The record gives the reactivity of an RNA of 207 nucleotides to DMS and 2A3.
The reactions ran in a buffer of 150 mM KOAc, 10 mM MgCl2 and 150 mM bicine (pH 8.5), at 24 C.
The 2A3 profile rests on 4,992 reads.
[RMDB]
RNA sequence: GGGAACGACUCGAGUAGAGUCGAAAAAAGAAGAUAUGUUCCAUGACUGGCAGGAAUGUGAGGAGUACACAGACAAAACGAUGAAGGAGAUUGUGAAGCACAAUUUGUCUAUUGUGAUCGGGGGAAAACAAGUGAUGGAAGGAUGAGGAAGCCAAAACAGCUAAUGAGUAUUCGUACUCAUUAGCUGAAAAGAAACAACAACAACAAC
Reactivity to DMS in 0.01 (KOAc 150mM, MgCl2 10mM, bicine 150mM(pH8.5), 24C), signal-to-noise 3, nucleotides 027 to 156: a070a060g010a070a060g000a090u000a050u000g020u000u000c020c000a100u000g010a180c030u000g020g020c010a080g010g010a060a090u000g020u000g010a130g030g010a060g050u000a080c080a050c060a110g000a150c040a050a050a070a070c070g020a070u000g010a090a090g010g010a100g010a120u010u010g020u000g020a160a080g000c030a030c010a040a070u010u000u000g000u000c090u000a140u000u010g020u010g000a090u010c050g020g010g000g030g040a060a060a030a050c070a030a100g000u000g010a090u000g030g020a050a070g010g000a040u020g010a070g020g000a050a030g040c040c020a020a040a060a140
Reactivity to 2A3 in 0.01 (KOAc 150mM, MgCl2 10mM, bicine 150mM(pH8.5), 24C), signal-to-noise 5, nucleotides 027 to 156: a010a000g110a020a020g020a030u080a040u110g050u050u030c030c030a040u110g070a060c040u040g000g050c030a030g010g090a070a050u110g020u040g030a040g010g010a010g020u050a030c060a000c010a040g060a020c030a030a090a040a010c080g050a040u090g050a030a020g050g030a030g010a030u040u090g040u040g080a060a030g020c020a010c010a060a030u040u050u080g070u010c050u040a060u050u060g000u030g030a060u090c040g000g000g000g010g040a000a040a000a050c080a090a050g050u030g110a020u030g000g040a000a040g020g010a000u030g000a010g010g000a020a000g010c020c020a010a050a050a060